[RMDB]
RNA sequence: GGGAACGACUCGAGUAGAGUCGAAAAGGAGACUCCAUCUUUACAGGCUGUACUGGCUCUUGGAACAAGGUCACUCAAAUUGCUAACAUGUUCUUGGAACAGACUCAGCAUUCCCUUAACUUUGUGGCCUUGAUUCGCAGUUCGCUGCGAAUCAAGGAAAAGAAACAACAACAACAAC
Reactivity to DMS in 0.01 (KOAc 150mM, MgCl2 10mM, bicine 150mM(pH8.5), 24C), signal-to-noise 1, nucleotides 027 to 126: g010g020a090g010a060c060u000c080c050a040u000c050u000u020u020a060c140a140g000g000c090u020g010u000a100c050u020g010g010c060u000c030u000u000g010g030a010a040c080a010a040g000g000u000c030a060c050u000c140a020a120a140u020u010g030c030u010a060a100c140a000u000g020u000u000c000u010u010g020g000a030a010c020a010g000a100c280u000c080a000g000c000a060u000u010c000c010c020u000u000a080a140c100u000u000u010g020u000g030g000
Reactivity to 2A3 in 0.01 (KOAc 150mM, MgCl2 10mM, bicine 150mM(pH8.5), 24C), signal-to-noise 1, nucleotides 027 to 126: g050g000a080g020a030c050u040c010c020a030u020c000u020u040u060a070c070a000g090g000c020u000g020u100a050c020u060g000g060c030u040c000u040u040g040g020a020a010c000a070a000g020g000u030c030a020c040u100c020a040a090a070u210u120g020c020u050a070a000c000a050u030g000u000u030c000u070u050g070g000a010a010c000a040g110a300c030u070c010a000g010c000a020u030u050c020c000c000u090u150a120a040c050u060u050u070g150u110g080g060
Description
Structure probing data (DMS and 2A3) for a 177-nucleotide construct. For DMS, 916 sequencing reads were counted. For DMS the reverse transcriptase was MarathonRT. The RNA was probed in 150 mM KOAc, 10 mM MgCl2 and 150 mM bicine (pH 8.5) at 24 C. The 2A3 profile rests on 686 reads.